[RMDB]
Chemical mapping of a 177-nucleotide RNA with DMS and 2A3. Source: RMDB library OK1LIB, as collected in RNAgym. 2A3 is a SHAPE reagent: it acylates the 2'-hydroxyl of flexible nucleotides of all four kinds. The reactions ran in a buffer of 150 mM KOAc, 10 mM MgCl2 and 150 mM bicine (pH 8.5), at 24 C. Reactivities are given for positions 27 through 126.
RNA sequence: GGGAACGACUCGAGUAGAGUCGAAAAGAAUGUGGAGCCGUCUCCUUUUUAUUUUACCUCGUCCUUACGGCUUUAUACAUAUUUCGAUAUGUAUGCUGGACGACAACGAGGCCAGCUUACAAUUAGAGGGAUGGCUUUACUUCGGUGAAGCCAUCCCAAAAGAAACAACAACAACAAC
Reactivity to DMS in 0.01 (KOAc 150mM, MgCl2 10mM, bicine 150mM(pH8.5), 24C), signal-to-noise 2, nucleotides 027 to 126: g000a030a000u000g030u000g060g030a050g000c010c010g060u000c150u010c090c000u010u020u040u000u040a030u030u030u010u010a150c020c030u000c080g000u060c110c000u030u010a150c040g000g000c060u000u030u010a000u030a020c020a050u000a040u000u040u030c160g010a040u000a000u000g030u000a000u000g010c030u010g030g000a120c150g000a100c230a050a060c090g010a120g010g010c100c010a060g010c030u020u080a130c060a100a070u150u000a050g010a240
Reactivity to 2A3 in 0.01 (KOAc 150mM, MgCl2 10mM, bicine 150mM(pH8.5), 24C), signal-to-noise 3, nucleotides 027 to 126: g040a020a050u090g010u090g020g030a000g000c050c000g040u010c060u100c000c000u000u000u030u010u010a240u010u180u050u080a040c000c000u050c040g080u060c010c030u030u140a020c010g020g040c000u040u150u030a070u020a000c030a000u030a050u100u110u060c070g090a040u010a040u060g000u000a000u010g010c020u040g000g000a010c050g030a020c040a060a020c080g050a000g000g090c000c020a020g000c020u030u060a100c130a090a130u050u090a100g020a060